Description
This 177-nucleotide RNA was probed chemically with 2A3 and DMS. Conditions: 150 mM KOAc, 10 mM MgCl2 and 150 mM bicine (pH 8.5), 24 C. It was measured as part of the RMDB library OK2TST. For 2A3 the reverse transcriptase was SuperScript II with manganese. The 2A3 profile rests on 2,798 reads.
[RMDB]
RNA sequence: GGGAACGACUCGAGUAGAGUCGAAAAGUGGUAGCGGACCUGCUAGUGGUUAUGGCGCGGGUACCGCGCAGUGAAGGGCACCGAGGGGGAAUCAGCGCCUUUGUCGUCGAGGCUGAUUCGCCCGGGACACCAGUGAGAAGUUCGCUUCUCACUGGUGAAAAGAAACAACAACAACAAC
Reactivity to 2A3 in 0.01 (KOAc 150mM, MgCl2 10mM, bicine 150mM(pH8.5), 24C), signal-to-noise 3, nucleotides 027 to 126: g110u100g030g070u090a050g020c000g040g010a020c020c030u030g010c040u090a050g080u040g220g160u190u110a130u230g160g000c040g000c020g040g000g000u120a300c020c000g000c010g020c010a000g000u060g040a080a080g020g000g030c040a020c030c050g020a190g000g000g010g010g000a000a010u030c000a000g010c010g180c060c040u060u030u120g100u070c070g000u000c020g010a020g020g020c000u010g000a010u000u020c010g100c040c010c000g000g010g000a010
Reactivity to DMS in 0.01 (KOAc 150mM, MgCl2 10mM, bicine 150mM(pH8.5), 24C), signal-to-noise 3, nucleotides 027 to 126: g010u000g010g020u000a080g020c020g000g000a080c040c030u000g010c030u000a150g010u010g020g020u010u010a090u010g000g020c180g030c020g000g000g030u000a110c010c010g020c010g000c060a040g010u000g010a100a080g010g010g010c070a050c100c030g000a120g020g000g010g010g010a010a010u010c000a010g010c070g010c050c020u000u000u020g010u000c130g020u010c070g020a070g010g010c000u000g000a020u010u000c010g010c000c000c000g000g000g000a260